An RNA of 207 nucleotides, treated with DMS and 2A3 and read out base by base. The RNA was probed in 150 mM KOAc, 10 mM MgCl2 and 150 mM bicine (pH 8.5) at 24 C. 2A3 adducts were read by reverse transcription with SuperScript II with manganese.
RNA sequence: GGGAACGACUCGAGUAGAGUCGAAAAAUGUGGGUGACAUAAUCCUAUCAGCAGAAGAACGCCCAGGAGUCCCGUACAGCCUCCAGAUUCAACGAUCCUCGGCGGGGCGGGGUAGCUUCCACCCCGAGCUGUUUCGCCAGCUCUACGAGCACGCAGGCUAGACUAGAAGGUUCGCCUUCUAGUCUAGAAAAGAAACAACAACAACAAC
Reactivity to DMS in 0.01 (KOAc 150mM, MgCl2 10mM, bicine 150mM(pH8.5), 24C), signal-to-noise 1, nucleotides 027 to 156: a060u000g030u020g010g070g040u000g040a240c060a090u020a050a090u000c020c020u010a120u010c050a070g060c040a200g020a090a120g010a050a100c020g010c060c040c010a070g010g000a160g000u000c010c020c050g000u010a050c060a090g020c000c000u000c000c080a080g130a210u000u000c020a060a100c210g020a100u010c050c010u010c090g030g000c000g090g000g030g000c040g010g000g010g040u000a060g010c000u000u020c000c020a120c050c010c000c010g010a050g000c000u010g000u000u000u020c030g040c120c010a200g010c010u010c020u010a060c090g010a150g040c050a090c060g050c060a070g010g020
Reactivity to 2A3 in 0.01 (KOAc 150mM, MgCl2 10mM, bicine 150mM(pH8.5), 24C), signal-to-noise 1, nucleotides 027 to 156: a000u180g020u070g030g000g030u030g040a040c040a090u150a060a050u140c000c000u060a120u160c050a030g000c010a000g010a150a000g050a150a020c080g010c000c010c000a010g070g030a000g020u050c000c000c050g010u070a080c040a080g000c020c000u010c020c060a020g000a080u160u150c070a160a010c040g050a060u000c000c000u040c040g000g000c000g010g000g030g000c020g010g000g000g010u020a030g000c000u080u010c020c000a000c000c000c000c010g000a020g020c010u010g040u030u130u170c060g020c070c020a010g020c010u050c010u020a050c070g000a000g010c050a010c100g060c070a030g060g000
It was measured as part of the RMDB library OK3TST.